[RMDB]
RNA sequence: GGGAACGACUCGAGUAGAGUCGAAAAGAUAUGGAGUGUGAGUGGGAGAUCGGAUUCGGAAACGAAUCCCGAUCGAAGAACACUACACUCCUAAGUCAAAACCGUGCUUUGUUCGCAAAGCACGGAAUCCUUUAUUGAUCUUCGGAUCAAUAAAGGAAAAAGAAACAACAACAACAAC
Reactivity to DMS in 0.01 (KOAc 150mM, MgCl2 10mM, bicine 150mM(pH8.5), 24C), signal-to-noise 4, nucleotides 027 to 126: g000a010u000a030u010g000g000a020g030u000g000u000g000a040g050u000g010g020g000a060g020a010u000c010g000g000a030u000u000c000g010g010a010a000a020c000g000a020a010u000c130c080c060g030a000u000c000g010a100a150g010a160a210c010a010c000u000a020c000a000c000u000c000c000u000a000a070g000u010c000a100a090a130a200c010c000g020u000g010c010u000u000u000g020u010u010c280g010c010a010a010a020g010c000a000c000g010g000a040a030
Reactivity to 2A3 in 0.01 (KOAc 150mM, MgCl2 10mM, bicine 150mM(pH8.5), 24C), signal-to-noise 3, nucleotides 027 to 126: g000a000u010a010u070g000g020a010g010u020g010u120g190a090g010u020g030g020g050a300g020a050u000c010g000g000a000u010u000c000g000g000a030a010a010c000g000a010a010u050c150c090c050g010a000u010c010g000a170a050g050a010a000c010a000c000u000a000c000a000c000u000c000c000u000a010a000g010u000c020a010a020a110a220c000c010g000u000g000c000u000u060u040g010u100u070c110g010c190a000a010a000g010c000a000c010g000g000a000a030